[RMDB]
The record gives the reactivity of an RNA of 177 nucleotides to 2A3 and DMS. For 2A3, 883 sequencing reads were counted. Source: RMDB library OK2TST, as collected in RNAgym.

RNA sequence: GGGAACGACUCGAGUAGAGUCGAAAAUCGUACCAUCUGCUACAGGUAAGUUAAAUGUUACAUCUGCUCCACCUGUUGUACUAGCAGGAGCAUCUAUUGAUACGCUCCCUGAUGAGGAGCCGUUUAGUCAUAUCGAUGCCUUCGGGCAUCGAUAUGAAAAAGAAACAACAACAACAAC
Reactivity to 2A3 in 0.01 (KOAc 150mM, MgCl2 10mM, bicine 150mM(pH8.5), 24C), signal-to-noise 1, nucleotides 027 to 126: u020c030g030u010a000c050c000a070u060c000u040g020c040u050a010c010a030g000g010u080a020a020g050u060u160a110a140a080u210g040u160u170a040c000a040u000c000u040g020c020u050c030c010a020c000c010u000g020u000u080g090u090a140c070u050a080g000c000a040g050g000a000g030c000a010u020c030u170a190u030u210g040a030u070a200c050g000c000u000c020c020c000u120g070a030u090g060a080g000g000a010g010c000c010g010u130u070u050a040g040
Reactivity to DMS in 0.01 (KOAc 150mM, MgCl2 10mM, bicine 150mM(pH8.5), 24C), signal-to-noise 2, nucleotides 027 to 126: u000c140g000u020a200c090c020a070u010c040u010g010c000u000a030c000a060g000g020u000a060a070g020u000u000a080a050a100u020g010u010u000a120c120a020u000c060u000g010c040u000c050c100a090c030c010u030g000u000u010g000u010a100c140u040a070g010c050a070g000g000a040g020c030a030u010c100u000a120u000u020g010a100u010a070c170g000c010u020c000c000c000u000g020a000u020g000a300g010g000a010g040c010c150g000u000u000u000a160g000